[RMDB]
RNA sequence: GGGAACGACUCGAGUAGAGUCGAAAAGCAUUAAGAGAGUACUCUUAUUCCCACAACGUUGGUGACAACGUUGAUUUUCCGGUGGCCACCCGCCCGGGCCACCGUUACUCCACUCCACUCCUUCGGGACUGGUUUGGAGGAACAUGAGAGGGCUAAACCUGACCCUAAAUUUCGAUUUAGGGUCAGGAAAAGAAACAACAACAACAAC
Reactivity to 2A3 in 0.01 (KOAc 150mM, MgCl2 10mM, bicine 150mM(pH8.5), 24C), signal-to-noise 1, nucleotides 027 to 156: g060c040a080u050u170a030a000g000a000g000a020g240u170a260c000u000c000u030u000a000u010u090c000c000c000a010c000a000a000c020g000u020u030g020g020u070g050a040c000a000a020c010g010u000u000g060a060u080u030u220u060c090c020g000g000u000g000g000c000c000a040c000c080c060g000c000c030c000g000g000g000c030c000a000c000c000g010u000u060a010c000u000c000c000a000c000u000c000c000a040c030u010c020c010u010u090c150g140g000g010a000c000u000g020g000u000u010u000g000g000a000g000g030a020a060c060a050u150g020a060g050a060g230g000g000c000u020a040a040a000